Source: RMDB library OK1LIB, as collected in RNAgym.
Chemical mapping of a 177-nucleotide RNA with 2A3 and DMS.

[RMDB]
RNA sequence: GGGAACGACUCGAGUAGAGUCGAAAAGUGGCACGUGUGGAGCCACGGGUUGGUAACUCCGGAUCAACCGCGUCUCAUCUACACGAGGAAUGCCAUGUUGAGACGUAAAAUGGUAUUCCACCGGAGAGGCUAGCAAGAUGUUCGCAUCUUGCUAGCCAAAAGAAACAACAACAACAAC
Reactivity to 2A3 in 0.01 (KOAc 150mM, MgCl2 10mM, bicine 150mM(pH8.5), 24C), signal-to-noise 2, nucleotides 027 to 126: g020u020g010g000c010a010c170g080u150g070u230g190g080a060g000c020c000a000c000g000g040g000u000u020g010g010u000a050a000c000u000c000c000g000g020a000u010c000a000a020c000c000g000c080g050u010c000u000c020a020u030c050u100a010c020a020c100g010a050g000g100a030a000u030g000c000c010a010u020g060u050u090g040a110g060a070c060g070u180a000a000a000a000u000g010g050u050a000u000u000c040c010a000c050c010g000g010a000g010a010
Reactivity to DMS in 0.01 (KOAc 150mM, MgCl2 10mM, bicine 150mM(pH8.5), 24C), signal-to-noise 1, nucleotides 027 to 126: g080u010g000g010c000a090c040g060u000g000u010g040g020a300g000c000c000a000c000g000g000g010u000u020g030g000u000a140a040c000u000c000c000g010g000a040u000c110a000a000c070c000g080c190g000u000c000u000c000a120u040c140u090a080c150a030c300g020a110g030g000a040a000u000g030c060c030a000u000g060u000u000g000a210g040a110c140g040u050a000a090a010a000u000g000g020u000a030u000u000c050c000a050c080c060g040g000a000g010a110
The RNA was probed in 150 mM KOAc, 10 mM MgCl2 and 150 mM bicine (pH 8.5) at 24 C. For 2A3, 792 sequencing reads were counted.